[RMDB]
The record gives the reactivity of an RNA of 207 nucleotides to 2A3 and DMS. For DMS, 2,290 sequencing reads were counted.

RNA sequence: GGGAACGACUCGAGUAGAGUCGAAAAAACUCAGCUAGGGAGAGUAUAACAUUCAUGUUGACGAGACCUAGACGAAACACAGAGGAAAAUUAUUAAUCACUGGAUAGUAUUACUAAUGACUCUGUGUAAAACUCUUCUACGUUCGCGUAGAAGAGAAGUAACAAGAACUGUUCGCAGUUCUUGUUACAAAAGAAACAACAACAACAAC
Reactivity to 2A3 in 0.01 (KOAc 150mM, MgCl2 10mM, bicine 150mM(pH8.5), 24C), signal-to-noise 4, nucleotides 027 to 156: a000a010c010u010c000a010g020c000u010a000g000g050g000a070g020a040g050u080a130u080a300a030c060a010u110u230c060a070u290g010u040u060g030a060c030g020a000g060a080c010c000u010a010g010a050c010g000a010a030a000c000a000c000a000g000a010g020g040a070a100a130a020u010u010a010u000u020a000a010u040c030a010c030u060g050g080a090u260a300g000u010a010u000u010a010c030u000a000a030u000g020a030c000u000c000u000g000u000g000u010a000a000a020a000c000u000c000u000u000c000u000a000c000g030u040u030c210g020c000g080u010a000g000a000a000g000a000g000a010a000
Reactivity to DMS in 0.01 (KOAc 150mM, MgCl2 10mM, bicine 150mM(pH8.5), 24C), signal-to-noise 1, nucleotides 027 to 156: a080a060c100u000c010a040g050c050u000a010g010g040g000a210g000a250g000u020a080u010a040a100c010a110u000u000c150a110u010g020u000u000g000a080c010g000a300g030a080c000c000u000a080g010a230c120g000a150a110a000c010a010c000a020g030a010g040g010a090a040a100a070u000u000a040u010u000a020a070u000c040a100c000u000g020g000a230u000a080g010u000a040u000u020a010c080u000a020a030u000g000a090c000u010c000u000g060u000g000u010a000a020a010a100c000u000c000u000u000c000u000a000c010g000u000u010c300g060c020g040u000a030g000a010a010g000a040g020a010a070

Conditions: 150 mM KOAc, 10 mM MgCl2 and 150 mM bicine (pH 8.5), 24 C. The 2A3 profile rests on 2,177 reads.